The record gives the reactivity of an RNA of 177 nucleotides to DMS and 2A3. Conditions: 150 mM KOAc, 10 mM MgCl2 and 150 mM bicine (pH 8.5), 24 C. For DMS, 9,893 sequencing reads were counted.
[RMDB]
RNA sequence: GGGAACGACUCGAGUAGAGUCGAAAACGAAAGCUGGAGAUCGCCCGCUAUCCUCACCAGGGUGGUUUUGAGGCCCUCGUCGUUGAGGGAGAAUAGUGCAUCGAAAGACGUGGCGAGCACCUCCUCGUACUAUAGCGCUAUUCGUAGCGCUAUAGUAAAAAGAAACAACAACAACAAC
Reactivity to DMS in 0.01 (KOAc 150mM, MgCl2 10mM, bicine 150mM(pH8.5), 24C), signal-to-noise 7, nucleotides 027 to 126: c030g010a090a090a130g010c100u000g010g010a050g020a060u000c060g010c010c010c030g010c030u000a050u000c020c020u000c030a060c070c050a160g000g010g030u010g020g000u000u000u010u010g010a150g010g000c000c000c000u000c020g010u010c250g000u010u010g000a030g000g000g000a060g000a120a080u000a070g020u010g020c100a090u010c020g000a090a100a130g000a040c080g020u010g010g000c010g010a030g010c070a100c110c010u000c010c000u000c090g000
Reactivity to 2A3 in 0.01 (KOAc 150mM, MgCl2 10mM, bicine 150mM(pH8.5), 24C), signal-to-noise 6, nucleotides 027 to 126: c020g050a090a040a010g090c120u070g000g010a010g000a050u010c020g010c020c010c010g000c020u030a040u060c010c010u010c020a040c030c020a030g090g070g060u150g050g050u070u040u130u190g100a070g060g020c010c000c010u010c020g140u030c030g080u080u180g010a010g010g030g020a040g070a010a030u070a040g040u060g050c060a070u060c070g070a130a060a020g090a060c060g070u110g020g000c020g010a010g010c020a070c040c010u010c000c010u020c030g020